[RMDB]
RNA sequence: GGGAACGACUCGAGUAGAGUCGAAAACUAAUCGCCAGUACCAUCAGAAAAUGCUUAAGUCCAUGGCUGCAACUCGUGGAGCGACUUGCGUCAUUGGUACUACAAAGUUCUACGGUGGCUGGGAUUUACGCGCAGCACUUCGGUGCUGCGAAAAGAAACAACAACAACAAC
Reactivity to DMS in 0.01 (KOAc 150mM, MgCl2 10mM, bicine 150mM(pH8.5), 24C), signal-to-noise 3, nucleotides 027 to 129: c000u020a060a000u010c040g030c000c000a040g020u030a080c030c000a120u030c060a050g040a110a050a000a120u100g040c000u000u000a090a040g030u090c000c000a020u000g050g010c060u130g000c020a000a010c140u020c020g060u090g100g050a250g050c040g020a020c070u000u020g010c050g030u030c020a010u060u160g050g000u050a000c030u040a080c140a090a080a010g030u010u030c050u050a130c160g000g020u030g050g000c020u000g000g020g060a010u000u000u000a030c110g050
Reactivity to 2A3 in 0.01 (KOAc 150mM, MgCl2 10mM, bicine 150mM(pH8.5), 24C), signal-to-noise 9, nucleotides 027 to 129: c000u010a000a010u020c060g100c160c010a000g020u040a110c020c000a010u020c020a020g120a040a080a010a020u170g030c030u080u060a070a000g000u000c000c000a010u000g010g010c130u190g000c050a010a000c020u010c020g030u180g260g130a190g130c010g010a000c010u000u000g010c000g010u000c000a020u050u290g020g020u130a010c000u020a030c060a010a060a000g050u060u000c020u070a040c110g000g000u000g000g000c000u010g000g000g010a000u020u020u100a060c080g010
Chemical mapping of a 170-nucleotide RNA with DMS and 2A3. High 2A3 reactivity points to a flexible backbone, as in loops and unpaired stretches. The 2A3 profile rests on 23,890 reads.